[RMDB]
Chemical mapping of a 177-nucleotide RNA with 2A3 and DMS. For 2A3, 5,396 sequencing reads were counted. Values cover nucleotides 27 to 126.
RNA sequence: GGGAACGACUCGAGUAGAGUCGAAAAGAUAUGGAGAUGCGUAGACAUGCUGGUGGGUCGGAAACGACCCAUACAGCAACAGCUACCAUCUCCUAAGUCAAAACCUUUCCCACUUCGGUGGGAAAGGCGAGUCUAUCAGGUUCGCCUGAUAGACUCGAAAAGAAACAACAACAACAAC
Reactivity to 2A3 in 0.01 (KOAc 150mM, MgCl2 10mM, bicine 150mM(pH8.5), 24C), signal-to-noise 2, nucleotides 027 to 126: g000a010u000a020u030g020g010a000g000a010u010g000c110g070u010a010g040a030c150a280u300g040c000u030g000g030u000g000g070g000u010c000g030g000a060a010a000c010g000a000c000c060c000a000u060a050c010a010g000c010a010a010c050a010g000c000u010a010c010c000a000u000c000u000c000c000u000a010a000g010u000c030a010a000a060a180c000c000u030u020u000c010c030c010a010c030u070u150c300g110g020u010g010g010g000a010a000a000g000g010
Reactivity to DMS in 0.01 (KOAc 150mM, MgCl2 10mM, bicine 150mM(pH8.5), 24C), signal-to-noise 3, nucleotides 027 to 126: g000a030u000a030u010g010g000a010g010a010u000g010c300g020u000a010g010a020c040a300u020g020c000u000g000g040u000g050g000g000u000c010g030g000a000a010a030c020g020a010c000c000c000a000u000a010c000a000g010c010a060a040c230a090g000c000u000a000c000c000a000u010c000u000c000c000u000a000a050g000u010c000a140a060a120a300c000c000u000u000u000c000c000c010a020c000u010u000c160g040g030u000g010g000g000a000a000a020g000g010
About this RNA
The RNA was probed in 150 mM KOAc, 10 mM MgCl2 and 150 mM bicine (pH 8.5) at 24 C. For DMS, 3,151 sequencing reads were counted. The data come from the RNA Mapping Database (RMDB), library TTRDES. 2A3 adducts were read by reverse transcription with SuperScript II with manganese.